[RMDB]
RNA sequence: GGGAACGACUCGAGUAGAGUCGAAAAGUAAACAGGUUGAGUAGAGUGUGAGCCGCUGCGAUACCAGCUCGAUUACGAGCCCUUGGCAGCGCGUCGGAAGGACGGGUCCCUGAAUAUAAAAUAGUAACUGUCAGAAGUAAUUCGUUACUUCUGACAGAAAAGAAACAACAACAACAAC
Reactivity to 2A3 in 0.01 (KOAc 150mM, MgCl2 10mM, bicine 150mM(pH8.5), 24C), signal-to-noise 2, nucleotides 027 to 126: g040u090a080a030a110c030a010g000g080u100u120g050a040g060u060a050g040a050g060u060g030u000g050a020g020c020c020g000c020u000g020c020g020a000u040a120c040c000a020g020c000u010c010g110a210u230u290a120c040g020a020g030c000c000c000u010u000g090g000c020a020g000c010g020c030g050u000c020g060g090a070a020g030g000a030c030g000g000g080u050c020c000c000u010g070a120a000u270a010u060a050a130a050a050u130a000g110u050a080a070
Reactivity to DMS in 0.01 (KOAc 150mM, MgCl2 10mM, bicine 150mM(pH8.5), 24C), signal-to-noise 4, nucleotides 027 to 126: g020u000a050a070a130c050a050g000g010u000u000g010a100g000u010a040g010a100g000u010g010u000g020a130g000c050c010g030c010u000g010c020g010a080u000a060c090c150a180g000c010u000c000g020a240u000u000a150c090g010a010g010c020c100c090u000u000g010g010c030a010g020c020g010c070g010u000c040g010g000a080a060g030g000a070c050g000g000g020u000c020c000c030u000g010a050a110u000a090u010a050a050a050a080u000a080g020u000a070a120